[RMDB]
RNA sequence: GGGAACGACUCGAGUAGAGUCGAAAAGGGAAUGGUGGUUUACCCCGUUAUCCAAUGAUUACCGACCAAUAAUUGGCGAAACUCGUUUCGCGUUGGCUGCCUAAUUCAAGGAAUUAGCGUGCCUUCAAAGACAUCAAGAAGUUCGCUUCUUGAUGAAUCGUUCUACUAACUUCGGUUAGUAGAACGAAAAAGAAACAACAACAACAAC
Reactivity to DMS in 0.01 (KOAc 150mM, MgCl2 10mM, bicine 150mM(pH8.5), 24C), signal-to-noise 2, nucleotides 027 to 156: g000g030g000a050a030u000g010g000u000g000g000u000u020u010a120c010c010c030c000g000u000u000a080u000c010c000a070a160u010g010a130u010u000a050c000c010g020a100c000c020a090a100u020a060a170u010u000g030g030c000g000a050a040a060c050u000c140g000u000u000u000c010g020c070g010u000u000g010g030c030u000g000c110c010u000a020a040u000u000c010a180a230g040g000a050a020u000u010a030g010c030g030u010g000c000c010u000u000c020a110a050a160g000a280c010a010u000c010a000a000g020a030a030g020u010u010c300g000c020u000u000c020u000u000g000a010u000g010a030a030
Reactivity to 2A3 in 0.01 (KOAc 150mM, MgCl2 10mM, bicine 150mM(pH8.5), 24C), signal-to-noise 4, nucleotides 027 to 156: g060g000g020a080a080u100g010g040u060g030g030u080u090u230a150c030c030c000c010g030u040u060a070u050c020c000a030a050u150g070a080u070u100a060c020c020g080a060c060c100a030a060u240a190a070u120u150g090g000c020g020a020a030a030c110u090c140g150u030u020u020c030g010c000g000u010u030g000g010c030u060g040c030c000u010a010a010u010u000c100a180a120g150g040a060a010u000u000a020g030c040g080u030g000c030c000u010u000c010a040a070a030g080a050c000a000u000c000a000a010g000a000a000g010u030u120c210g030c110u000u000c010u000u000g000a000u000g000a000a030
The record gives the reactivity of an RNA of 207 nucleotides to DMS and 2A3. The DMS profile rests on 4,622 reads. For 2A3 the reverse transcriptase was SuperScript II with manganese. Conditions: 150 mM KOAc, 10 mM MgCl2 and 150 mM bicine (pH 8.5), 24 C. The 2A3 profile rests on 2,760 reads. Values cover nucleotides 27 to 156.